[RMDB]
RNA sequence: GGGAACGACUCGAGUAGAGUCGAAAACUUAGUGAGUUCGCUCACUAAGGGACUCUGGAACCCAGGCUGGAGAGGGACCAAGUAGGAGGCUGGGCACCAGCAACAUUCAGCGCUUCGGCGCUGAAAACGUAUGCAUUUGUUUCGACAAAUGCAUACGAAAAGAAACAACAACAACAAC
Reactivity to DMS in 0.01 (KOAc 150mM, MgCl2 10mM, bicine 150mM(pH8.5), 24C), signal-to-noise 3, nucleotides 027 to 126: c000u000u000a000g030u010g010a020g020u000u020c250g020c000u000c000a010c000u000a000a000g000g000g010a150c100u000c020u000g000g000a150a100c020c020c000a070g020g000c050u000g000g020a060g000a110g010g000g010a110c050c040a060a090g020u000a050g000g020a080g000g010c040u000g000g010g010c110a080c050c010a030g010c090a080a050c110a130u000u000c000a010g010c000g030c000u000u010c180g030g000c000g000c000u000g000a000a010a090a170
Reactivity to 2A3 in 0.01 (KOAc 150mM, MgCl2 10mM, bicine 150mM(pH8.5), 24C), signal-to-noise 3, nucleotides 027 to 126: c000u000u000a000g010u000g010a010g030u030u110c180g120c100u010c000a000c000u000a000a000g000g000g000a020c030u010c030u070g050g060a070a060c020c000c010a040g090g020c030u050g010g050a090g020a070g110g050g040a030c030c030a120a040g040u040a080g090g140a020g020g040c030u010g050g000g000c020a070c010c020a010g010c020a020a030c000a050u020u060c000a000g010c000g000c010u050u090c230g150g000c000g010c000u000g010a000a000a000a010